[RMDB]
Overview: Chemical mapping of a 177-nucleotide RNA with 2A3 and DMS. The DMS profile rests on 639 reads. The reactions ran in a buffer of 150 mM KOAc, 10 mM MgCl2 and 150 mM bicine (pH 8.5), at 24 C. Values cover nucleotides 27 to 126. It was measured as part of the RMDB library M2PK90. DMS adducts were read by reverse transcription with MarathonRT. For 2A3 the reverse transcriptase was SuperScript II with manganese.
RNA sequence: GGGAACGACUCGAGUAGAGUCGAAAAUGAAAUAAAGCGUACGAAGAUGGACGUACGCAACCAGUGCGUACAGGAAUCGCACAUCCAGCGCUCUAAGGUGAGCGCAAAACCUAAUAAUAGUAAAAAACUUCUUAAUCCGAUUCGUCGGAUUAAGAAGAAAAGAAACAACAACAACAAC
Reactivity to 2A3 in 0.01 (KOAc 150mM, MgCl2 10mM, bicine 150mM(pH8.5), 24C), signal-to-noise 1, nucleotides 027 to 126: u040g020a000a000a070u190a030a030a000g010c000g000u000a010c000g020a060a060g080a100u210g040g050a030c040g000u010a000c010g000c020a000a000c000c000a020g020u010g000c010g000u030a080c050a110g130g080a100a060u060c000g000c030a010c000a020u130c050c030a060g000c020g000c000u030c000u050a090a120g230g000u060g060a000g000c000g000c000a000a000a020a040c020c000u070a090a020u160a180a080u070a120g130u210a050a040a020a000a120a080
Reactivity to DMS in 0.01 (KOAc 150mM, MgCl2 10mM, bicine 150mM(pH8.5), 24C), signal-to-noise 1, nucleotides 027 to 126: u010g000a110a060a020u000a140a130a160g010c000g010u010a030c000g020a160a160g020a210u000g030g010a190c010g000u000a000c000g010c000a020a010c160c120a160g000u000g000c010g010u010a080c130a130g000g000a090a060u000c000g000c060a030c000a170u010c100c130a110g000c060g010c000u000c000u000a110a090g050g000u000g030a000g000c010g000c000a030a030a080a130c060c010u000a080a100u010a070a200u000a160g000u000a000a050a060a020a110a130